Structure probing data (DMS) for a 177-nucleotide construct. Conditions: 150 mM KOAc, 10 mM MgCl2 and 150 mM bicine (pH 8.5), 24 C. Values cover nucleotides 27 to 126. The DMS profile rests on 498 reads.

RNA sequence: GGGAACGACUCGAGUAGAGUCGAAAAGAUAUGGAGAUCGACAUGCACGACAUUCGGAAACGAAUGAAGUGCAACAGCGAUUCUCCUAAGUCAAAGAUUAAUACCGAGUUCGCUCGGUAUUAAUCAAUCAUGGGCCAUACUUCGGUAUGGCCCAUGAAAAAGAAACAACAACAACAAC
Reactivity to DMS in 0.01 (KOAc 150mM, MgCl2 10mM, bicine 150mM(pH8.5), 24C), signal-to-noise 1, nucleotides 027 to 126: g000a100u000a300u000g000g010a000g020a020u000c000g000a010c170a180u000g010c010a000c000g000a280c000a020u000u000c000g000g010a210a110a200c020g030a020a010u080g000a000a300g000u000g000c000a000a020c190a300g020c030g000a060u010u000c020u000c000c000u000a100a070g000u000c050a060a030a070g010a000u000u000a000a010u000a000c020c000g000a010g000u000u000c250g000c000u000c000g010g030u020a000u000u000a000a000u000c000a020a160